[RMDB]
RNA sequence: GGGAACGACUCGAGUAGAGUCGAAAAGAUAUGGAUGGGACAACAGCUAUCCUUCGGAAACGAAGGGAUAGACAUGUCCGUCCUAAGUCAAAACAGCAACUGCAUACUUCGGUAUGCAGUUGCUGAAGCUAGCUAGGAUGUUCGCAUCCUAGCUAGCAAAAGAAACAACAACAACAAC
Reactivity to DMS in 0.01 (KOAc 150mM, MgCl2 10mM, bicine 150mM(pH8.5), 24C), signal-to-noise 1, nucleotides 027 to 126: g010a040u000a300u000g000g000a010u010g020g040g000a010c000a060a100c260a190g010c000u010a000u000c000c000u000u010c010g000g000a060a010a170c000g030a010a000g010g020g000a010u000a000g000a080c070a240u010g000u000c000c010g000u000c000c000u010a110a130g000u000c040a050a070a140a270c010a090g020c000a030a000c000u000g000c000a000u000a010c000u000u000c180g010g000u000a000u010g010c040a020g000u000u000g010c010u000g010a030a070
About this RNA: Chemical mapping of a 177-nucleotide RNA with DMS. Conditions: 150 mM KOAc, 10 mM MgCl2 and 150 mM bicine (pH 8.5), 24 C. It was measured as part of the RMDB library TTRDEL.